The data come from the RNA Mapping Database (RMDB), library TTRDES. Structure probing data (2A3 and DMS) for a 177-nucleotide construct. 2A3 adducts were read by reverse transcription with SuperScript II with manganese.
RNA sequence: GGGAACGACUCGAGUAGAGUCGAAAAGAUAUGGAAUAUCCACACAUCAGGCUUUCAUGGUCGGAAACGACCAUGGGCCGACGACGUGUGGAGUAUUCCUAAGUCAAAAGAAUCCUUCGGGAUUCAACUGAUAAAGGAACUUCGGUUCCUUUAUCAGAAAAGAAACAACAACAACAAC
Reactivity to 2A3 in 0.01 (KOAc 150mM, MgCl2 10mM, bicine 150mM(pH8.5), 24C), signal-to-noise 2, nucleotides 027 to 126: g020a040u110a130u170g000g020a020a030u030a000u010c020c000a000c000a010c000a030u070c090a070g010g000c060u070u300u300c080a000u000g010g020u000c010g020g020a060a100a050c000g010a020c000c000a010u010g010g000g030c010c000g010a010c050g060a010c020g010u010g010u030g000g010a000g000u000a000u020u000c000c000u010a140a020g070u010c040a010a020a090a300g000a000a010u010c020c000u080u170c300g090g000g000a000u000u000c020a020a030
Reactivity to DMS in 0.01 (KOAc 150mM, MgCl2 10mM, bicine 150mM(pH8.5), 24C), signal-to-noise 3, nucleotides 027 to 126: g010a040u010a300u000g000g010a030a020u010a050u010c000c020a010c000a010c000a070u010c020a160g010g020c010u000u010u030c000a030u010g010g000u000c000g000g000a100a130a230c010g010a020c010c000a000u000g010g020g010c000c000g010a040c280g020a000c030g020u010g030u020g000g000a020g020u000a010u000u000c000c000u000a030a140g010u000c040a100a090a140a210g010a030a000u010c000c000u000u000c190g030g000g000a020u000u000c010a090a190